[RMDB]
RNA sequence: GGGAACGACUCGAGUAGAGUCGAAAACUUUUGCCUUGAUAAUGUAGGUUAUUCUUCCAACUGCCUUGAAGGAUGAUAUUUAUAAAACUAGUCACUCCUUGUUCUGCCUUUUUGCCAGACUACCUGUGUGGGAUGUGAGGGCUCAGAUCAAAAUACAGGUGGAUUACAAGUUCGCUUGUAAUCCACCAAAAGAAACAACAACAACAAC
Reactivity to 2A3 in 0.01 (KOAc 150mM, MgCl2 10mM, bicine 150mM(pH8.5), 24C), signal-to-noise 2, nucleotides 027 to 156: c000u130u050u040u140g030c010c020u050u030g050a050u050a300a060u220g220u160a050g040g030u080u080a090u060u050c020u040u000c010c020a030a070c110u070g030c000c030u110u000g050a050a000g020g020a020u030g030a020u030a060u130u200u000a130u130a050a170a030a000c030u030a010g030u030c010a050c070u000c000c000u000u020g070u070u050c050u000g030c000c000u110u130u000u120u140g010c020c010a060g040a130c030u050a090c010c070u030g010u020g040u090g110g030g010a000u000g070u060g090a050g020g030g030c030u010c040a030g040a100u040c070a040a070a070a110u180a050c070a020

An RNA of 207 nucleotides, treated with 2A3 and read out base by base.
Reactivities are given for positions 27 through 156.
For 2A3 the reverse transcriptase was SuperScript II with manganese.
The 2A3 profile rests on 605 reads.
It was measured as part of the RMDB library OK3TST.